This 177-nucleotide RNA was probed chemically with DMS and 2A3. In probing experiments dimethyl sulfate is read out at A N1 and C N3, which are open when not base-paired. For DMS, 983 sequencing reads were counted. For 2A3 the reverse transcriptase was SuperScript II with manganese.
RNA sequence: GGGAACGACUCGAGUAGAGUCGAAAACUUCUGGUGUUCGCACCAGAAGAAAUCCGUACUCGAGGCGCCAGUCGAGAGAUAUUGUGGCUCUUCCCAGCCGGAAAACCGCUCCCUUCGGGGAGCGGAAGCAUUACGAAUACUUCGGUAUUCGUAAUGCAAAAGAAACAACAACAACAAC
Reactivity to DMS in 0.01 (KOAc 150mM, MgCl2 10mM, bicine 150mM(pH8.5), 24C), signal-to-noise 1, nucleotides 027 to 126: c020u000u010c020u020g020g000u000g010u000u020c160g010c000a020c000c000a000g030a020a020g000a000a070a170u010c040c040g010u000a020c000u000c000g010a050g000g040c030g010c060c080a100g040u030c010g020a240g010a160g030a050u000a070u010u010g020u010g000g000c030u010c080u000u000c000c020c030a230g000c080c050g020g020a060a060a040a170c020c000g000c020u000c000c000c000u010u010c110g020g030g030g000a020g010c010g000g010a020a010
Reactivity to 2A3 in 0.01 (KOAc 150mM, MgCl2 10mM, bicine 150mM(pH8.5), 24C), signal-to-noise 1, nucleotides 027 to 126: c000u040u000c020u000g020g020u000g050u020u020c170g050c080a000c000c000a000g010a000a000g000a000a020a000u030c010c020g010u000a000c010u010c000g000a000g030g020c040g010c070c000a020g100u100c060g030a040g020a020g030a100u050a100u170u270g170u180g050g000c000u010c000u000u000c010c000c020a000g050c080c080g160g020a030a080a040a070c000c000g010c000u010c000c000c000u020u060c290g070g000g000g040a000g030c000g020g000a000a000